[RMDB]
RNA sequence: GGGAACGACUCGAGUAGAGUCGAAAAUCUAACUCAUUCGUGAGUUAGAGUGAGCGCAGCGACCAUUGGGCCGGAGGCGCGCUGUCGGUGCCGCGCGUGGCGAUAGUGCUUGCUUCGGCAAGCACAAGGUAUUCCUAUCAUUCGUGAUAGGAAUACCAAAAGAAACAACAACAACAAC
Reactivity to DMS in 0.01 (KOAc 150mM, MgCl2 10mM, bicine 150mM(pH8.5), 24C), signal-to-noise 7, nucleotides 027 to 126: u000c000u000a000a000c000u000c000a040u000u010c210g020u000g010a010g010u000u000a000g000a030g010u000g010a110g010c040g010c020a090g010c030g000a070c030c030a180u010u010g010g010g020c020c030g010g010a130g010g010c060g010c040g020c030u000g010u000c050g010g010u000g010c040c040g010c090g000c050g030u000g010g020c060g010a090u000a090g010u000g000c000u000u000g000c000u000u000c170g010g000c000a000a010g010c010a000c010a030a030
Reactivity to 2A3 in 0.01 (KOAc 150mM, MgCl2 10mM, bicine 150mM(pH8.5), 24C), signal-to-noise 7, nucleotides 027 to 126: u000c000u000a000a010c010u000c010a020u070u050c190g110u040g030a000g000u000u010a000g000a000g020u120g080a050g010c050g000c040a050g010c030g070a050c000c020a090u090u160g070g040g000c040c020g060g050a060g060g040c030g000c020g000c060u040g070u080c060g050g070u080g040c030c000g040c010g000c030g040u040g030g020c030g030a060u090a090g010u000g000c000u000u010g000c000u010u020c150g080g000c000a010a000g010c000a000c000a000a010
Chemical mapping of a 177-nucleotide RNA with DMS and 2A3. The RNA was probed in 150 mM KOAc, 10 mM MgCl2 and 150 mM bicine (pH 8.5) at 24 C. DMS adducts were read by reverse transcription with MarathonRT. It was measured as part of the RMDB library M2PK50. For DMS, 17,192 sequencing reads were counted.